[RMDB]
This 177-nucleotide RNA was probed chemically with 2A3 and DMS.
RNA sequence: GGGAACGACUCGAGUAGAGUCGAAAAGAAGGAUCGAACUGGUGGUUCGAGAUCCGAAUAAAUGGUCUCUACUGACAUACAGUCCACUGAAUAAAGUGGUGGGAAAUAAACCACAGUAGUACCUAAAGGGAAGAUAUUAGUUCGCUAAUAUCUUCCCAAAAGAAACAACAACAACAAC
Reactivity to 2A3 in 0.01 (KOAc 150mM, MgCl2 10mM, bicine 150mM(pH8.5), 24C), signal-to-noise 9, nucleotides 027 to 126: g120a030a060g000g010a010u010c000g000a000a000c010u120g130g180u270g050g010u180u010c010g010a030g030a040u000c000c000g010a020a040u110a030a070a040u100g010g010u030c040u000c000u150a000c000u000g010a010c020a070u300a070c070a080g000u000c000c000a000c000u080g050a210a150u210a240a200a010g000u010g030g000u020g010g000g050a090a260a040u190a040a110a030c000c000a000c000a000g000u000a000g000u010a010c000c010u020a090a060a060
Reactivity to DMS in 0.01 (KOAc 150mM, MgCl2 10mM, bicine 150mM(pH8.5), 24C), signal-to-noise 7, nucleotides 027 to 126: g010a190a110g000g000a030u010c000g010a010a010c000u000g040g040u040g020g000u010u010c000g000a080g000a050u010c000c000g000a140a090u020a080a080a070u040g000g000u000c070u000c000u000a000c000u010g010a020c020a140u030a140c280a150g000u000c000c010a000c020u000g000a130a130u040a080a110a060g000u000g000g000u000g000g010g000a060a060a110u020a080a100a130c010c000a040c000a000g000u000a000g010u010a010c010c000u000a070a090a110
The reactions ran in a buffer of 150 mM KOAc, 10 mM MgCl2 and 150 mM bicine (pH 8.5), at 24 C.
Source: RMDB library OK1LIB, as collected in RNAgym.
Reactivities are rounded to 0.1 and cut off at 0 and 3.
2A3 adducts were read by reverse transcription with SuperScript II with manganese.